RNA sequence: GGGAACGACUCGAGUAGAGUCGAAAAUCUAUGGUCUUCGGACCAUAGAAAAUAAGAAUCGGAAGCAUGAGAACCGAGACAAACAUCCAAACGCGAAAGCGAAAACAAUCCAGUUCGCUGGAUUGAACUCAUAAUAUACCUUCGGGUAUAUUAUGAGAAAAGAAACAACAACAACAAC
Reactivity to DMS in 0.01 (KOAc 150mM, MgCl2 10mM, bicine 150mM(pH8.5), 24C), signal-to-noise 4, nucleotides 027 to 126: u000c000u000a000u000g000g000u000c000u000u030c210g030g010a020c000c010a000u000a010g000a030a020a070a080u000a070a160g020a050a180u000c010g010g000a090a130g030c100a110u010g020a140g010a150a080c020c030g010a030g000a210c080a050a100a060c130a070u000c030c030a040a080a150c040g000c020g010a070a040a110g000c010g010a090a070a030a180c000a000a000u000c000c000a020g000u000u020c240g020c000u000g000g000a010u000u000g000a070a120
Reactivity to 2A3 in 0.01 (KOAc 150mM, MgCl2 10mM, bicine 150mM(pH8.5), 24C), signal-to-noise 5, nucleotides 027 to 126: u000c000u000a000u000g020g010u020c010u030u060c240g110g000a000c000c000a000u000a000g000a000a000a000a000u110a010a020g030a030a040u010c010g000g040a080a030g100c110a120u170g080a040g030a250a030c000c000g000a010g010a020c040a010a130a010c010a030u020c020c010a110a050a070c020g020c000g060a090a010a010g020c010g040a050a010a000a070c010a000a000u000c000c000a000g010u040u040c160g070c080u000g000g000a000u000u000g010a010a010